[RMDB]
RNA sequence: GGGAACGACUCGAGUAGAGUCGAAAACACACACACACACACACCCCAGCAGUUCUUGCCUGCCCAGAUUCCUCUGCAGCUAAAGUGAUGAAACUUACUGGGCGGAGCUUCCUAAAAAGAUUAUUAGGUAACGUGGAAUUUUCGAAUUCCACGUUACAAAAGAAACAACAACAACAAC
Reactivity to 2A3 in 0.01 (KOAc 150mM, MgCl2 10mM, bicine 150mM(pH8.5), 24C), signal-to-noise 1, nucleotides 027 to 126: c010a000c020a010c000a000c000a000c000a000c000a000c000a000c000a050c000c010c020c000a000g000c030a010g030u130u020c000u100u060g000c010c020u020g020c030c000c000a030g000a080u000u050c000c010u020c070u040g020c090a040g090c060u100a160a030a070g080u020g090a120u080g020a070a050a020c010u020u070a040c000u030g010g000g000c000g010g030a000g000c010u060u100c000c020u130a080a060a020a040a050g080a040u190u240a070u190u120a180g030
Reactivity to DMS in 0.01 (KOAc 150mM, MgCl2 10mM, bicine 150mM(pH8.5), 24C), signal-to-noise 2, nucleotides 027 to 126: c050a110c030a060c060a020c020a000c030a040c110a050c080a070c070a090c040c020c050c030a160g050c100a100g000u020u000c070u000u000g030c040c020u010g010c010c010c000a030g020a140u000u000c010c010u000c040u020g060c020a070g020c070u000a050a050a090g000u030g000a070u000g010a080a070a060c080u000u020a150c010u010g000g020g030c040g010g000a020g010c080u000u000c040c000u000a040a050a030a120a050g000a090u000u000a130u010u020a030g010
The data come from the RNA Mapping Database (RMDB), library OK2TST.
Chemical mapping of a 177-nucleotide RNA with 2A3 and DMS.
The 2A3 profile rests on 819 reads.
DMS adducts were read by reverse transcription with MarathonRT.